[RMDB]
RNA sequence: GGGAACGACUCGAGUAGAGUCGAAAACAUCAGAGCUGACUGUUGGCGCAAUGAUCACUUCGACAAACUGGCGGCUGAUGAUCGCGCUGGCCGUUGCUGCAUCCAAUUCACGGUUAAAGGCGAUGAAGCUAUACCUACGAUUCGUCGUAGGUAUAGCAAAAGAAACAACAACAACAAC
Reactivity to 2A3 in 0.01 (KOAc 150mM, MgCl2 10mM, bicine 150mM(pH8.5), 24C), signal-to-noise 5, nucleotides 027 to 126: c030a060u100c040a020g030a010g120c040u080g080a060c010u040g020u090u040g030g040c010g000c060a080a100u220g020a040u050c020a010c060u080u060c040g110a070c030a060a300a110c110u090g050g000c030g040g000c000u040g020a190u040g010a010u040c030g000c000g000c020u010g010g000c010c010g030u030u030g000c020u040g000c000a050u040c010c000a020a020u130u080c050a020c090g030g060u060u110a180a070a010g080g010c040g010a050u050g040a060a010
Reactivity to DMS in 0.01 (KOAc 150mM, MgCl2 10mM, bicine 150mM(pH8.5), 24C), signal-to-noise 5, nucleotides 027 to 126: c070a050u010c100a070g020a240g010c020u010g030a030c050u010g020u000u010g010g010c020g010c070a120a080u010g010a040u000c070a040c110u010u010c020g010a040c090a070a110a140c190u010g020g020c010g010g010c300u010g000a060u000g020a030u000c030g010c000g000c040u000g000g000c000c050g020u000u000g030c030u000g020c090a070u010c060c060a080a110u000u010c100a040c060g000g010u020u000a070a060a110g010g000c040g000a060u010g000a100a130